[RMDB]
RNA sequence: GGGAACGACUCGAGUAGAGUCGAAAAUACAAGUACGAAAGUACAAGCCUUAUCAGUUGGGCCUUCUGGUCAAAUUAGCGCUCACCCAGGAGGUGCUUCGCAUGAGGUCGACAAGCGCUAAAAGAAAACAAAGAGUAUGAUUCGUCAUACUCUUUGUAAAAGAAACAACAACAACAAC
Reactivity to 2A3 in 0.01 (KOAc 150mM, MgCl2 10mM, bicine 150mM(pH8.5), 24C), signal-to-noise 5, nucleotides 027 to 126: u160a020c020a110a000g010u000a010c010g050a150a030a000g010u010a000c010a030a010g020c000c010u050u050a070u100c080a120g180u250u300g250g100g000c000c010u000u000c010u020g010g030u050c020a030a040a240u060u030a040g000c010g000c020u020c040a020c000c010c000a000g020g000a010g000g030u040g080c030u150u190c020g000c000a000u040g020a010g020g030u040c030g040a040c060a130a030g000c000g000c010u000a030a000a000a040g050a010a090a010
Reactivity to DMS in 0.01 (KOAc 150mM, MgCl2 10mM, bicine 150mM(pH8.5), 24C), signal-to-noise 9, nucleotides 027 to 126: u010a090c150a090a130g020u000a000c000g010a150a100a150g000u000a010c000a160a200g000c010c010u000u000a040u000c130a130g010u010u010g020g010g010c000c000u000u000c010u000g000g000u010c060a060a070a100u000u000a010g010c000g010c020u000c140a130c300c000c010a030g000g000a020g010g020u000g010c050u000u000c080g020c130a070u000g000a020g000g010u000c070g020a070c210a070a050g000c020g010c000u000a020a050a070a120g000a080a060a060
An RNA of 177 nucleotides, treated with 2A3 and DMS and read out base by base.
The RNA was probed in 150 mM KOAc, 10 mM MgCl2 and 150 mM bicine (pH 8.5) at 24 C.
The 2A3 profile rests on 8,128 reads.